[RMDB]
RNA sequence: GGGAACGACUCGAGUAGAGUCGAAAAGAGAGAGAGAGAAAAUGUCCUUUAGGCCGGUUCCUCUUACUUGGCAGAGGGAGGCUGCUAUUCUCCGCCUGCAUUUCUUUUUCUGGAUUACUUAGUUAUGUGGUAAAAGUGCAUUCGUGCACUUUUACCAAAAAGAAACAACAACAACAAC
Reactivity to DMS in 0.01 (KOAc 150mM, MgCl2 10mM, bicine 150mM(pH8.5), 24C), signal-to-noise 2, nucleotides 027 to 126: g000a100g010a180g000a050g010a040g000a080g000a000a040a090a040u020g000u000c040c000u000u000u030a130g000g010c010c030g010g020u000u030c000c020u000c030u030u010a100c080u000u000g010g000c030a080g000a070g000g000g000a080g010g000c100u000g000c060u030a080u020u000c020u000c020c030g010c060c010u000g000c040a060u000u010u000c000u000u010u000u000u000c040u000g040g000a200u000u020a070c070u020u000a080g000u000u010a090u030g030
Reactivity to 2A3 in 0.01 (KOAc 150mM, MgCl2 10mM, bicine 150mM(pH8.5), 24C), signal-to-noise 2, nucleotides 027 to 126: g040a010g000a000g020a000g010a000g000a000g020a000a070a000a040u110g060u160c010c000u050u130u080a070g010g000c000c010g110g020u040u120c000c010u020c030u050u080a130c070u140u100g090g000c070a010g020a040g050g000g000a000g000g030c060u030g020c040u040a060u100u060c030u020c010c010g050c030c000u000g000c010a080u000u020u020c000u020u090u040u010u010c030u080g070g020a070u130u010a110c080u040u050a030g070u110u180a240u260g030